Chemical mapping of a 177-nucleotide RNA with DMS and 2A3.

RNA sequence: GGGAACGACUCGAGUAGAGUCGAAAAGGUGCCUGGGGCAGAGCCUGGCCUUGUGGGGCUGUGGAGCAGGGUGAGGAUCUGGGAUCUAGGACUGCUAUGCACCGGGCCGAAUCGUGAUACCCAAGGGACUUUCUCCAGAAUUCGUUCUGGAGAAAGUAAAAGAAACAACAACAACAAC
Reactivity to DMS in 0.01 (KOAc 150mM, MgCl2 10mM, bicine 150mM(pH8.5), 24C), signal-to-noise 4, nucleotides 027 to 126: g010g010u010g030c010c000u000g020g010g000g030c010a050g020a140g000c010c010u000g000g010c010c010u000u010g030u010g020g010g010g010c010u000g020u010g010g000a100g010c020a030g010g010g010u010g010a270g010g000a030u000c020u020g000g020g010a040u000c020u000a180g010g010a110c020u000g000c010u000a090u000g000c010a020c020c000g000g010g020c000c030g000a050a070u000c080g010u000g000a180u010a130c010c000c000a150a100g010g000g000
Reactivity to 2A3 in 0.01 (KOAc 150mM, MgCl2 10mM, bicine 150mM(pH8.5), 24C), signal-to-noise 3, nucleotides 027 to 126: g100g020u110g020c010c030u020g000g000g040g000c010a030g000a020g170c000c030u020g010g020c030c000u110u130g160u260g070g030g000g000c040u060g100u170g140g040a050g020c030a020g030g120g130u130g110a160g030g030a030u050c060u300g180g130g050a000u010c030u020a010g000g140a050c020u010g000c010u040a050u100g010c020a020c010c010g000g010g000c000c000g060a030a050u080c060g010u070g050a040u120a180c000c010c010a030a030g090g020g000
For 2A3 the reverse transcriptase was SuperScript II with manganese. For DMS, 7,335 sequencing reads were counted.